Chemical mapping of a 207-nucleotide RNA with 2A3. For 2A3 the reverse transcriptase was SuperScript II with manganese. It was measured as part of the RMDB library RNAMAK. Conditions: 150 mM KOAc, 10 mM MgCl2 and 150 mM bicine (pH 8.5), 24 C.
RNA sequence: GGGAACGACUCGAGUAGAGUCGAAAAGGGGUCCGUGGACAUUUGAAAUCUACCCACCGAACUACGACUGAAGCCUCCACGGUCGCGAGGAUUUCACCAUCCACGGACGGAGGCACCCAAACACAUUAGUAAUGUGUUCGCACAUUACUAAUGUGAACCGUCAUUUCAGUUUCGACUGAAAUGACGGAAAAGAAACAACAACAACAAC
Reactivity to 2A3 in 0.01 (KOAc 150mM, MgCl2 10mM, bicine 150mM(pH8.5), 24C), signal-to-noise 2, nucleotides 027 to 156: g140g000g030g010u000c000c000g020u000g020g010a070c090a220u170u140u230g030a030a040a000u000c020u070a130c040c050c150a130c110c110g050a180a150c070u280a060c180g010a020c000u000g000a050a000g010c010c020u010c020c010a020c050g010g000u000c010g030c060g080a100g050g020a000u020u010u030c200a240c150c060a030u000c000c000a000c000g000g000a000c000g000g000a000g000g010c000a060c000c010c000a030a160a100c000a000c000a000u000u000a010g000u010a010a010u000g000u010g030u000u090c220g020c020a000c000a000u000u000a010c010u000a000a000u000g000u000g000a010a040